Conditions: 150 mM KOAc, 10 mM MgCl2 and 150 mM bicine (pH 8.5), 24 C. The record gives the reactivity of an RNA of 177 nucleotides to 2A3 and DMS. For DMS, 2,370 sequencing reads were counted. It was measured as part of the RMDB library OK2TST. The 2A3 profile rests on 2,939 reads.

RNA sequence: GGGAACGACUCGAGUAGAGUCGAAAAUGUCGCAAAUAGUUACCACACAUACGUAACAGCACACGCCUACACUGCGGAAGCGAUACAAAAUUGUAUCAAGUUAGGUGUUAAGGGUAUCGAACACGGAAGAGAGUCUUAGUUUCGACUAAGACUCUCUAAAAGAAACAACAACAACAAC
Reactivity to 2A3 in 0.01 (KOAc 150mM, MgCl2 10mM, bicine 150mM(pH8.5), 24C), signal-to-noise 3, nucleotides 027 to 126: u100g000u040c050g020c090a020a080a070u120a100g030u050u020a030c000c020a030c000a000c010a080u120a140c080g130u020a070a010c000a020g030c010a020c010a010c010g020c000c000u070a070c060a010c080u070g000c020g080g010a050a030g010c030g030a000u000a020c000a000a290a120a180u200u110g000u010a020u010c000a000a040g030u060u050a010g000g000u010g030u030u080a030a050g070g040g050u030a030u060c020g050a050a010c090a030c110g010g070a090
Reactivity to DMS in 0.01 (KOAc 150mM, MgCl2 10mM, bicine 150mM(pH8.5), 24C), signal-to-noise 4, nucleotides 027 to 126: u020g000u000c020g010c060a030a060a140u010a110g010u000u010a020c020c020a070c100a090c150a040u000a050c080g010u000a050a040c030a160g010c040a070c120a180c040g030c020c070u000a060c150a080c120u000g000c040g000g020a160a140g000c060g020a030u000a000c020a040a110a060a140u000u020g090u000a010u000c010a090a080g010u000u000a040g010g020u000g000u000u010a090a070g000g020g000u000a030u000c040g010a090a050c150a060c080g000g010a140